[RMDB]
RNA sequence: GGGAACGACUCGAGUAGAGUCGAAAACAAUCAGAUAAUUUUCUUUGUUUCUCGAGUCUUUGCUAAUACAGGCAGUGUUUGCUACACUCCUAUAGAUGAGAUACCCUAUAAGAGUUUCUCUGAUAGUAUAGCUACUGCUUCGGCAGUAGCAAAAGAAACAACAACAACAAC
Reactivity to 2A3 in 0.01 (KOAc 150mM, MgCl2 10mM, bicine 150mM(pH8.5), 24C), signal-to-noise 6, nucleotides 027 to 129: c020a010a060u230c070a020g060a100u090a130a290u190u170u130u030c050u020u070u040g000u000u060u000c000u000c010g010a010g030u000c000u010u030u030g050c000u030a080a100u120a120c070a020g040g000c020a000g000u030g030u040u080u080g020c010u050a020c000a000c030u000c000c000u060a060u060a080g090a030u070g000a000g020a020u060a060c030c000c000u060a080u070a200a070g040a000g000u000u050u000c020u000c000u020g080a070u020a040g080u050a050u060a070
Reactivity to DMS in 0.01 (KOAc 150mM, MgCl2 10mM, bicine 150mM(pH8.5), 24C), signal-to-noise 4, nucleotides 027 to 129: c050a110a060u050c230a060g030a020u100a180a110u060u020u030u010c080u060u020u020g020u030u040u050c020u000c000g010a110g020u020c000u000u020u000g050c050u010a100a040u050a070c120a100g040g050c110a070g040u000g030u040u010u000g030c070u000a020c020a050c050u020c050c000u070a000u040a030g000a000u010g030a040g000a000u080a050c040c080c050u040a200u000a100a120g010a010g030u000u000u000c060u050c010u020g020a150u050a070g030u020a050u030a090